Source information
An RNA of 177 nucleotides, treated with DMS and read out base by base. For DMS, 687 sequencing reads were counted. Source: RMDB library OK2TRN, as collected in RNAgym. For DMS the reverse transcriptase was MarathonRT.
RNA sequence: GGGAACGACUCGAGUAGAGUCGAAAAAUGCUUAAUCAUAACAGUGUAGUCUAAGAUUUCAGCAUUAGAGUGAGAGACUAACUUAACAUGAACUGCUGAGUCAUUAUGGUAGGCGGAGGUAUUUGAGAAAUGCAUCACGCUUCGGCGUGAUGCAUUUAAAAGAAACAACAACAACAAC
Reactivity to DMS in 0.01 (KOAc 150mM, MgCl2 10mM, bicine 150mM(pH8.5), 24C), signal-to-noise 1, nucleotides 027 to 126: a070u010g010c030u000u000a090a070u010c060a000u000a080a070c180a110g000u020g020u000a040g000u020c040u000a100a110g020a090u000u000u000c060a040g000c020a070u000u000a070g030a140g020u000g020a100g000a110g000a140c220u020a070a080c060u000u010a020a090c170a020u010g000a120a270c300u000g010c000u000g000a070g000u000c010a080u010u000a020u000g020g010u000a020g030g000c000g040g000a060g070g030u000a110u000u010u010g010a110g040